[RMDB]
RNA sequence: GGGAACGACUCGAGUAGAGUCGAAAAUUUUGUGUACAAUGUCAGCGGUAGGGACAUAGAAUGCAUUGAAAUACCUCUUACUAUUGCAUAAAACAUAACUUAAUAAAAGACGGAUCUUGUACGAGAUAGUAUUUAUUGUAUACUUUUAAAAAAGCAAAGUAAAUCCUAUCUUCGGAUAGGAUUUACUAAAAGAAACAACAACAACAAC
Reactivity to 2A3 in 0.01 (KOAc 150mM, MgCl2 10mM, bicine 150mM(pH8.5), 24C), signal-to-noise 1, nucleotides 027 to 156: u070u100u030u050g070u010g000u030a040c060a110a000u010g010u030c000a010g000c010g050g000u080a020g010g020g000a040c040a000u100a040g110a100a070u100g010c040a040u020u130g010a000a130a000u070a070c000c010u030c020u070u010a000c040u040a030u010u200g000c060a130u150a130a040a060a090c030a010u070a040a080c030u150u200a120a020u100a130a230a010a000g000a000c010g010g000a000u000c000u020u140g000u030a030c060g000a000g000a020u030a010g020u180a050u080u130u070a080u300u000g030u200a190u260a110c030u000u010u090u290a130a190a000a060a100a000g060c040a000a100